[RMDB]
RNA sequence: GGGAACGACUCGAGUAGAGUCGAAAACAGAUGAUGUUCGCAUCAUCUGAAAUAAAAGCCAUGCAGGAAGGAAGGAGCAUGGCAACCAACCAACCAAAAUAUAAAUCUGUUCCUUCGGGAACAGAAACCAAUGAGUUUCCUUCGGGAAACUCAUUGGAAAAGAAACAACAACAACAAC
Reactivity to 2A3 in 0.01 (KOAc 150mM, MgCl2 10mM, bicine 150mM(pH8.5), 24C), signal-to-noise 1, nucleotides 027 to 126: c010a000g000a010u010g000a020u010g040u080u120c190g000c050a000u010c000a010u000c030u000g020a000a070a000u090a010a020a000a000g000c030c020a010u010g000c030a050g250g080a300a050g110g060a000a050g000g100a130g000c000a010u030g000g000c020a000a000c010c000a000a010c010c000a000a030c000c010a070a080a130a040u210a050u050a120a100a120u010c000u010g000u030u000c010c010u020u040c210g020g010g000a000a000c010a010g000a010a010a010
Annotation: The record gives the reactivity of an RNA of 177 nucleotides to 2A3. The reactions ran in a buffer of 150 mM KOAc, 10 mM MgCl2 and 150 mM bicine (pH 8.5), at 24 C. As a SHAPE reagent, 2A3 marks flexible, mostly unpaired nucleotides at the ribose 2'-OH. The 2A3 profile rests on 969 reads. For 2A3 the reverse transcriptase was SuperScript II with manganese.